[RMDB]
RNA sequence: GGGAACGACUCGAGUAGAGUCGAAAAGAUAUGGACGGAGCUUUGAUCUAUGGAUCGGAAACGAUCCUGUAGGGAGCUCGUCCUAAGUCAAAAGUACUCGCCUAGGGUUCGCCCUAGGCGAGUACAAGAUCAAUUAUUCGUUCGCGAAUAAUUGAUCAAAAGAAACAACAACAACAAC
Reactivity to 2A3 in 0.01 (KOAc 150mM, MgCl2 10mM, bicine 150mM(pH8.5), 24C), signal-to-noise 2, nucleotides 027 to 126: g010a020u050a030u160g010g020a010c230g190g110a060g040c010u180u230u160g120a110u150c000u030a040u060g010g020a000u000c020g010g000a050a080a050c010g000a010u000c000c070u010g000u030a020g000g020g010a000g000c010u000c000g000u010c000c000u010a130a010g020u010c030a060a070a030a200g000u000a000c000u000c000g000c000c000u000a000g050g010g070u040u110c300g100c000c000c000u000a010g000g000c000g000a000g000u000a000c000a000a000
Reactivity to DMS in 0.01 (KOAc 150mM, MgCl2 10mM, bicine 150mM(pH8.5), 24C), signal-to-noise 3, nucleotides 027 to 126: g010a060u000a300u010g000g010a010c000g030g010a020g000c000u010u010u030g010a090u020c000u010a040u010g000g010a000u000c000g010g000a090a090a220c010g000a010u010c000c000u000g050u000a010g000g000g000a010g000c000u000c000g000u000c010c000u000a010a070g010u000c030a080a100a140a140g010u000a000c000u000c010g020c010c010u000a000g010g000g030u000u020c300g000c000c000c020u010a000g000g010c000g010a010g000u000a000c000a020a090